Chemical mapping of a 207-nucleotide RNA with 2A3. High 2A3 reactivity points to a flexible backbone, as in loops and unpaired stretches.
RNA sequence: GGGAACGACUCGAGUAGAGUCGAAAAAGGCAACAUUCUUACUGAAUUCCAAGCCUAGGGUAGGUUCAAGGACUCUCUAGGGCAUGGGUGAAGGCCAGGAACCAAGGUUCAAUUUUGCUUAGGUAUUUGGCAAGCCAUUGCUUGGAGGCACCCAUCAGGAUAUCAUGGGAUUCGUCCCAUGAUAUCCAAAAGAAACAACAACAACAAC
Reactivity to 2A3 in 0.01 (KOAc 150mM, MgCl2 10mM, bicine 150mM(pH8.5), 24C), signal-to-noise 2, nucleotides 027 to 156: a010g180g000c060a140a060c040a200u020u090c030u120u150a170c050u100g060a070a060u070u060c000c010a000a020g000c000c000u020a030g010g100g030u200a060g020g060u080u040c090a170a110g080g000a040c050u070c010u000c000u140a020g030g030g080c040a020u040g010g000g000u050g040a040a050g060g010c040c010a000g050g030a030a020c020c000a050a010g060g010u060u270c040a110a280u130u130u040u220g030c050u060u070a040g020g010u130a160u170u070u070g020g000c010a020a010g020c000c010a080u040u150g000c020u040u020g010g010a060g000g050c020a080c000c020c000a040u060c050a060
About this RNA: For 2A3 the reverse transcriptase was SuperScript II with manganese. Reactivities are given for positions 27 through 156.